[RMDB]
RNA sequence: GGGAACGACUCGAGUAGAGUCGAAAAUUCACAAGCAGUAAAUAAGUGAACCUCGAACCUAUCUAGGAAUACGAUAUAGCGUUACUUCCGAACGGCAAACCAUGGCACUACGAAGUAAACGUAUGAUCGUUACGACAUUGUUCGCAAUGUCGUAACGAAAAGAAACAACAACAACAAC
Reactivity to DMS in 0.01 (KOAc 150mM, MgCl2 10mM, bicine 150mM(pH8.5), 24C), signal-to-noise 1, nucleotides 027 to 126: u000u000c010a060c010a040a300g020c220a040g000u070a030a060a110u040a030a280g030u000g010a100a040c100c010u010c110g100a010a130c040c060u000a140u010c140u000a010g000g000a150a050u000a040c000g000a030u000a010u000a240g040c000g000u000u000a060c000u000u000c000c010g000a110a200c240g000g000c010a050a130a240c300c230a090u000g000g010c000a000c000u000a190c230g000a030a030g000u000a000a030a070c060g030u000a010u010g000a060u000
Reactivity to 2A3 in 0.01 (KOAc 150mM, MgCl2 10mM, bicine 150mM(pH8.5), 24C), signal-to-noise 2, nucleotides 027 to 126: u010u000c010a010c000a010a080g120c040a040g120u300a100a080a130u130a300a040g010u010g020a010a020c000c000u050c080g070a000a070c010c010u210a220u300c030u050a050g050g040a140a020u090a200c000g000a040u050a020u140a220g010c000g020u000u010a010c020u020u000c000c020g030a030a060c070g020g000c010a040a040a040c070c000a130u220g090g000c020a010c010u010a020c040g000a000a010g000u020a020a140a000c000g020u000a090u170g070a010u000